[RMDB]
RNA sequence: GGGAACGACUCGAGUAGAGUCGAAAACAGUGUUGCAACGACGCUGAACUUUGAAGAGUACAUGGCUAAGCAAUACGGGGUCCGACCGAACAUCCACUGUGGCGACACUCACCAUGAUAACGGCUCACCCAUGAUCCUCAUUCGUGAGGAUCAUGGGAAAAGAAACAACAACAACAAC
Reactivity to DMS in 0.01 (KOAc 150mM, MgCl2 10mM, bicine 150mM(pH8.5), 24C), signal-to-noise 2, nucleotides 027 to 126: c080a010g040u000g000u000u000g000c070a120a240c100g000a070c110g000c050u000g000a110a120c080u000u000u030g000a070a100g000a060g010u000a100c140a090u000g000g000c020u000a160a160g010c070a070a080u030a030c090g050g010g000g020u000c020c050g000a130c070c060g020a070a080c130a030u000c060c040a040c080u010g000u000g000g000c080g010a070c080a040c030u010c060a110c090c060a040u010g000a110u000a070a080c080g020g000c090u010c070a210
Reactivity to 2A3 in 0.01 (KOAc 150mM, MgCl2 10mM, bicine 150mM(pH8.5), 24C), signal-to-noise 2, nucleotides 027 to 126: c050a030g000u020g040u070u070g040c080a150a050c130g060a010c000g010c040u060g050a150a120c110u120u170u170g180a160a120g020a020g110u070a030c060a110u120g060g000c070u090a070a040g040c040a100a060u120a110c090g000g000g040g020u070c040c030g010a050c050c000g030a010a020c010a050u040c000c050a040c060u060g000u080g100g020c000g020a000c010a000c010u000c010a070c010c030a070u070g020a060u080a050a040c030g080g010c010u000c010a080

An RNA of 177 nucleotides, treated with DMS and 2A3 and read out base by base. For 2A3 the reverse transcriptase was SuperScript II with manganese. The reactions ran in a buffer of 150 mM KOAc, 10 mM MgCl2 and 150 mM bicine (pH 8.5), at 24 C. In probing experiments dimethyl sulfate is read out at A N1 and C N3, which are open when not base-paired. The DMS profile rests on 1,157 reads.